[RMDB]
RNA sequence: GGGAACGACUCGAGUAGAGUCGAAAAGGUAGCUUUCGUAGAGGGCGCGUACUCCUGUACCCCAGCGCUACGUUUAUUUGCGUCCCCGUGAGAUGGAAACAUCGGGCACAGACGCUUUGCUACCGAAGGGAUGCAUAUGCUUCGGCAUAUGCAUCCCAAAAGAAACAACAACAACAAC
Reactivity to 2A3 in 0.01 (KOAc 150mM, MgCl2 10mM, bicine 150mM(pH8.5), 24C), signal-to-noise 2, nucleotides 027 to 126: g010g010u000a000g010c030u060u000u040c020g000u020a010g010a060g040g150g060c130g020c120g110u000a010c040u100c190c060u090g040u070a030c010c030c000c010a010g000c080g000c080u000a000c000g030u000u000u120a160u020u120u200g000c000g000u020c000c000c010c010g030u050g030a140g000a040u050g030g060a080a050a000c010a020u020c010g000g000g040c100a040c010a050g000a000c000g000c000u020u070u080g000c000u010a000c000c000g000a010a080
Reactivity to DMS in 0.01 (KOAc 150mM, MgCl2 10mM, bicine 150mM(pH8.5), 24C), signal-to-noise 2, nucleotides 027 to 126: g010g020u000a010g000c000u000u000u040c020g000u000a020g020a040g030g000g020c200g000c160g000u000a000c000u060c230c300u020g020u040a000c040c030c010c010a130g000c070g000c020u000a000c000g010u010u020u000a050u040u070u000g020c030g000u000c000c060c030c100g020u000g020a260g000a120u000g000g000a300a010a140c000a020u000c040g020g030g020c300a020c260a080g000a020c010g000c030u000u000u000g000c000u000a060c070c000g000a080a100